RNA sequence: GGGAACGACUCGAGUAGAGUCGAAAAGCUCAGCGCAAUGAUCGCUGGUGCGGGAACGGAUUACGCCGUUUUCCUAAUCAGCCGCUAUCACGAGUAUGUGCGGCUCGGUGAGCAUCCCGAGCGUGCCCAAAGGUGCCGAUUUCGAUCGGCACCUUUGAAAAGAAACAACAACAACAAC
Reactivity to 2A3 in 0.01 (KOAc 150mM, MgCl2 10mM, bicine 150mM(pH8.5), 24C), signal-to-noise 1, nucleotides 027 to 126: g030c000u000c030a030g020c060g010c010a050a200u190g020a060u080c030g000c050u050g060g000u070g020c050g000g060g010a010a000c000g000g050a060u210u300a060c210g000c030c010g000u000u000u010u110c000c000u040a060a020u010c010a000g010c000c050g000c000u070a050u060c010a010c050g060a040g040u190a080u160g100u030g000c010g060g000c000u000c000g110g010u050g000a030g040c030a050u060c000c000c000g000a020g000c050g010u040g070c020c000
Reactivity to DMS in 0.01 (KOAc 150mM, MgCl2 10mM, bicine 150mM(pH8.5), 24C), signal-to-noise 2, nucleotides 027 to 126: g010c000u000c010a060g010c060g010c130a150a140u010g000a020u000c250g010c050u000g000g000u000g010c180g000g000g010a030a000c010g010g020a180u010u020a150c300g000c000c000g010u000u010u010u000c000c000u000a270a000u000c020a020g010c010c070g040c060u010a090u000c030a140c010g010a080g010u000a100u020g010u020g000c100g000g000c000u000c030g000g000u000g020a020g000c050a190u000c010c020c020g000a070g020c030g000u000g000c040c140